Chemical mapping of a 177-nucleotide RNA with 2A3 and DMS. For 2A3 the reverse transcriptase was SuperScript II with manganese. The RNA was probed in 150 mM KOAc, 10 mM MgCl2 and 150 mM bicine (pH 8.5) at 24 C. For 2A3, 1,804 sequencing reads were counted.
RNA sequence: GGGAACGACUCGAGUAGAGUCGAAAAUGAUUGAGCGUAGCACACACUCAGACUGUACGACAGUCUGACACACACCUACGCUAGUGCAUCGUGUGUGUGAUAUCGAUGUAGCACGAAAAUGUAGUAAUGAGUCACAUAAGUUCGCUUAUGUGACUCAAAAAGAAACAACAACAACAAC
Reactivity to 2A3 in 0.01 (KOAc 150mM, MgCl2 10mM, bicine 150mM(pH8.5), 24C), signal-to-noise 2, nucleotides 027 to 126: u250g050a080u110u220g050a040g020c010g000u020a020g000c080a040c010a000c000a000c050u000c010a010g000a010c000u000g030u180a150c200g180a050c210a000g000u000c010u000g000a000c000a000c010a000c000a000c030c010u020a020c000g000c020u010a010g090u010g030c010a020u030c060g010u030g000u000g000u000g000u040g020a050u050a020u100c030g000a000u010g030u050a060g090c020a010c020g060a060a040a060a090u210g050u180a120g040u010a060a110
Reactivity to DMS in 0.01 (KOAc 150mM, MgCl2 10mM, bicine 150mM(pH8.5), 24C), signal-to-noise 4, nucleotides 027 to 126: u010g010a130u010u010g010a150g030c010g010u000a010g020c070a040c050a040c050a090c200u000c000a010g020a020c000u000g010u010a160c300g000a130c020a010g010u000c000u010g030a020c060a070c070a060c120a070c220c020u000a020c030g010c020u000a050g020u010g000c030a060u010c010g000u000g010u000g010u000g010u020g020a100u010a070u010c040g010a040u000g020u010a080g000c020a070c080g020a030a050a060a120u010g000u010a080g000u000a070a110